[RMDB]
RNA sequence: GGGAACGACUCGAGUAGAGUCGAAAACCGAAAUGAUUGUCAUACAGAACAGGAUCGUCGUGCAGCACGUUGGGGGCGAAGCGACUAAAACUUACCCAACUCAUCCAAAGCACCCUGCCCGUCGGGCGGCUGCGGAUUAAAUCAGUAGACACGGCUACCGAAAGAUAAGGUUCGCCUUAUCUUUCGGAAAAGAAACAACAACAACAAC
Reactivity to DMS in 0.01 (KOAc 150mM, MgCl2 10mM, bicine 150mM(pH8.5), 24C), signal-to-noise 1, nucleotides 027 to 156: c010c020g000a050a110a120u000g010a100u000u010g030u010c040a090u070a200c060a170g020a080a150c050a040g020g040a070u000c070g000u000c030g080u010g020c100a300g040c030a120c020g020u000u000g000g000g030g010g100c110g010a180a240g000c040g000a080c090u000a130a020a130a120c110u010u040a090c000c020c010a050a070c090u010c120a100u000c000c020a020a300a130g000c020a060c010c020c000u000g030c020c000c090g000u030c040g000g020g020c030g090g010c000u030g020c300g010g000a110u000u000a080a060a230u000c080a160g040u010a120g020a080c000a050c090g000g010c030u000a080
Reactivity to 2A3 in 0.01 (KOAc 150mM, MgCl2 10mM, bicine 150mM(pH8.5), 24C), signal-to-noise 3, nucleotides 027 to 156: c020c020g040a080a040a030u230g050a060u130u120g050u120c080a020u140a300c060a170g220a210a050c060a050g100g020a120u140c030g050u000c010g010u070g090c260a000g000c010a000c030g000u010u010g020g020g000g020g000c010g010a010a000g000c000g010a010c070u080a000a020a000a080c030u110u240a150c000c000c000a010a000c030u020c020a000u000c040c000a000a000a000g000c000a010c000c000c010u010g000c000c000c000g000u010c000g000g000g000c010g070g000c030u010g000c010g030g000a000u000u010a000a020a000u080c040a000g010u010a000g000a000c000a030c130g000g000c020u080a080
Conditions: 150 mM KOAc, 10 mM MgCl2 and 150 mM bicine (pH 8.5), 24 C. This 207-nucleotide RNA was probed chemically with DMS and 2A3. 2A3 adducts were read by reverse transcription with SuperScript II with manganese.